Source: RMDB library 15KLIB, as collected in RNAgym. The record gives the reactivity of an RNA of 170 nucleotides to 2A3 and DMS. For 2A3, 1,936 sequencing reads were counted. DMS adducts were read by reverse transcription with MarathonRT.

[RMDB]
RNA sequence: GGGAACGACUCGAGUAGAGUCGAAAAUACAGAAGCAACAUUUAACUUCUUGUUAGAUUUGGCAGGAUUGUUCAGAAUCUUUCUCCGCAAUGCCUAUGUGUACACUUCACAAGGGUUUGUGGUGGUCGCGGUCCCGUCUUCGGACGGGACAAAAGAAACAACAACAACAAC
Reactivity to 2A3 in 0.01 (KOAc 150mM, MgCl2 10mM, bicine 150mM(pH8.5), 24C), signal-to-noise 3, nucleotides 027 to 129: u260a020c000a010g010a000a000g000c030a000a170c000a110u030u050u150a070a000c000u000u000c000u030u130g000u010u020a140g030a120u090u060u030g080g060c000a000g030g110a050u050u020g020u120u030c030a000g030a190a020u000c030u000u000u000c000u000c000c000g000c000a050a050u140g130c070c030u120a200u030g050u000g000u030a150c290a070c240u060u100c020a000c000a020a060g050g040g000u000u000u040g010u000g010g010u060g030g040u000c000g000c000g190
Reactivity to DMS in 0.01 (KOAc 150mM, MgCl2 10mM, bicine 150mM(pH8.5), 24C), signal-to-noise 4, nucleotides 027 to 129: u050a150c100a130g000a080a120g010c050a000a000c200a100u000u130u000a110a080c010u050u000c110u070u020g010u060u000a050g000a060u010u010u080g000g040c000a030g020g010a050u000u000g010u000u050c190a090g010a030a130u010c050u010u110u000c040u050c100c090g000c040a090a000u070g030c020c070u030a120u000g040u040g000u000a110c230a140c290u030u020c020a000c030a040a300g010g000g040u000u000u000g020u070g020g050u050g060g010u000c060g000c070g020